[RMDB]
This 177-nucleotide RNA was probed chemically with DMS and 2A3.
The DMS profile rests on 5,265 reads.
The RNA was probed in 150 mM KOAc, 10 mM MgCl2 and 150 mM bicine (pH 8.5) at 24 C.
RNA sequence: GGGAACGACUCGAGUAGAGUCGAAAACAGUAAAACUAACAAUCCCAUUAAGGUGAUUGAUGAUUUUUCCUAUACCUUUCAAAAGAACCAAAUUUACUGUAUUAUUGGUGAUAGUGGCAGUGGUAAACACUAUCACCGGAUUCGUCCGGUGAUAGUGAAAAGAAACAACAACAACAAC
Reactivity to DMS in 0.01 (KOAc 150mM, MgCl2 10mM, bicine 150mM(pH8.5), 24C), signal-to-noise 5, nucleotides 027 to 126: c030a010g000u000a020a020a030a110c080u010a090a150c030a020a020u000c000c000c000a240u020u010a130a130g000g010u010g010a030u000u000g010a090u010g010a040u000u000u000u000u000c010c000u010a110u010a080c120c050u000u000u010c120a070a070a090a080g000a140a040c050c010a010a050a280u000u000u000a000c020u000g010u000a080u000u000a210u000u000g000g010u000g010a110u000a060g010u000g010g020c090a040g030u000g010g020u010a050a080a160
Reactivity to 2A3 in 0.01 (KOAc 150mM, MgCl2 10mM, bicine 150mM(pH8.5), 24C), signal-to-noise 3, nucleotides 027 to 126: c020a000g020u050a020a020a030a060c050u080a030a040c030a020a030u010c030c000c000a030u170u180a160a060g060g030u150g040a010u000u040g020a050u060g080a120u030u010u050u070u050c020c010u050a090u070a130c000c020u090u230u180c080a130a100a050a090g010a030a040c000c010a020a030a070u050u050u040a060c030u040g040u070a090u200u000a040u030u120g040g000u040g030a060u040a140g080u060g040g000c040a030g050u030g000g050u090a120a020a000